This 177-nucleotide RNA was probed chemically with 2A3 and DMS. For 2A3, 1,597 sequencing reads were counted. Values cover nucleotides 27 to 126. The RNA was probed in 150 mM KOAc, 10 mM MgCl2 and 150 mM bicine (pH 8.5) at 24 C. High DMS reactivity at an A or C suggests that its Watson-Crick edge is free. It was measured as part of the RMDB library RFM100.

RNA sequence: GGGAACGACUCGAGUAGAGUCGAAAAUACUGCUCUACUUGUCACCAUGCCUCCCUAGAAUAAACUGCCUUUUGAUGACCGGGACGAAUUGAGUGAAAUCGUAACGGACAGAUACGGGGCAGACAGAUAGAGGCAAAGUUUUCGAACUUUGCCUCUAAAAAGAAACAACAACAACAAC
Reactivity to 2A3 in 0.01 (KOAc 150mM, MgCl2 10mM, bicine 150mM(pH8.5), 24C), signal-to-noise 3, nucleotides 027 to 126: u100a000c060u020g040c000u020c000u050a040c000u020u040g060u150c010a040c040c010a050u110g030c000c000u080c020c000c010u050a050g240a290a060u280a100a150a090c020u000g010c000c010u030u030u070u050g060a040u010g030a020c000c000g000g080g000a000c000g020a080a220u160u140g040a160g160u160g230a050a080a070u040c000g010u000a000a000c000g000g040a040c040a000g090a000u120a090c060g000g000g000g030c000a000g040a000c010a000g060a020
Reactivity to DMS in 0.01 (KOAc 150mM, MgCl2 10mM, bicine 150mM(pH8.5), 24C), signal-to-noise 2, nucleotides 027 to 126: u100a060c080u010g010c020u000c000u000a040c000u040u000g000u000c070a210c230c150a100u050g010c060c040u000c000c000c000u000a150g020a040a200u030a030a040a110c040u050g030c000c000u000u020u000u040g000a180u000g040a030c000c000g010g000g010a010c030g000a060a070u000u000g010a290g000u120g000a120a080a140u000c000g000u000a050a000c000g010g000a060c000a010g000a170u010a020c270g000g000g000g000c000a000g000a030c240a090g040a160